[RMDB]
An RNA of 177 nucleotides, treated with 2A3 and DMS and read out base by base.
For 2A3, 1,463 sequencing reads were counted.
RNA sequence: GGGAACGACUCGAGUAGAGUCGAAAAGCUCAUGUGCUGAAUCCAAUCGUUCGGUGGUUUAGGUUCUGUACCCAUUCCAUGGCGGCGGGAACGGGUAUAAUCGAAAUCGAAAGAAGCGGACCCCGCGGCCCUAACAUUAGUUCGCUAAUGUUAGGGCAAAAGAAACAACAACAACAAC
Reactivity to 2A3 in 0.01 (KOAc 150mM, MgCl2 10mM, bicine 150mM(pH8.5), 24C), signal-to-noise 1, nucleotides 027 to 126: g020c010u060c140a130u160g090u120g120c000u020g000a030a060u010c000c020a030a080u060c060g070u090u040c000g030g040u010g010g090u020u050u130a080g000g040u090u040c070u120g050u020a010c000c000c000a030u000u010c000c010a010u080g110g000c030g010g030c000g020g020g010a020a030c010g010g000g020u030a030u050a020a080u050c000g040a070a040a070u010c010g000a040a050a070g010a060a030g050c040g020g010a070c000c000c000c030g020c040g110
Reactivity to DMS in 0.01 (KOAc 150mM, MgCl2 10mM, bicine 150mM(pH8.5), 24C), signal-to-noise 1, nucleotides 027 to 126: g030c020u000c190a090u010g030u010g020c000u010g010a060a130u000c030c050a100a130u000c090g010u000u010c070g020g030u000g000g000u000u000u000a110g000g010u010u020c230u020g020u000a030c010c000c000a080u010u000c000c000a040u000g020g020c040g010g020c080g000g000g000a020a020c040g000g000g000u000a000u000a020a060u000c020g000a040a070a080u010c010g000a060a090a110g000a050a170g010c090g000g020a160c050c010c000c030g000c150g000